[RMDB]
RNA sequence: GGGAACGACUCGAGUAGAGUCGAAAACACCAGGACCAUAGAGCAUAGUCUUGGGAUCUGGUAUUGUCAAGUGUAACUGACCAAUGCAGCUUCGUCUUGCUGUGCAACGAUAUUAGUGCAUGAAGCAACUGACUAUGUAGUUCGCUACAUAGUCAGUAAAAGAAACAACAACAACAAC
Reactivity to DMS in 0.01 (KOAc 150mM, MgCl2 10mM, bicine 150mM(pH8.5), 24C), signal-to-noise 7, nucleotides 027 to 126: c150a060c010c000a010g000g010a030c000c010a040u060a040g000a040g010c190a170u030a150g020u010c000u000u000g000g000g000a100u010c000u000g000g010u000a100u010u000g000u000c040a040a090g010u000g010u010a060a170c060u000g000a060c080c080a120a050u000g010c030a040g010c050u010u000c080g010u010c060u020u010g000c000u010g010u030g010c020a030a050c120g010a070u020a100u020u020a060g020u000g000c010a020u010g010a110a140g000c080a080
Reactivity to 2A3 in 0.01 (KOAc 150mM, MgCl2 10mM, bicine 150mM(pH8.5), 24C), signal-to-noise 9, nucleotides 027 to 126: c050a010c000c000a000g010g010a010c000c010a050u180a150g030a010g050c120a190u150a130g110u030c000u020u030g010g010g010a110u010c010u010g000g010u030a090u050u160g090u070c060a070a070g030u010g060u120a110a080c040u020g040a020c000c040a030a040u140g020c020a030g010c020u070u060c050g110u020c060u070u130g010c020u050g020u030g020c010a090a050c070g020a020u040a060u260u150a060g020u000g000c010a010u050g080a050a010g010c020a010
Conditions: 150 mM KOAc, 10 mM MgCl2 and 150 mM bicine (pH 8.5), 24 C. Chemical mapping of a 177-nucleotide RNA with DMS and 2A3. For 2A3, 14,033 sequencing reads were counted. Reactivities are given for positions 27 through 126.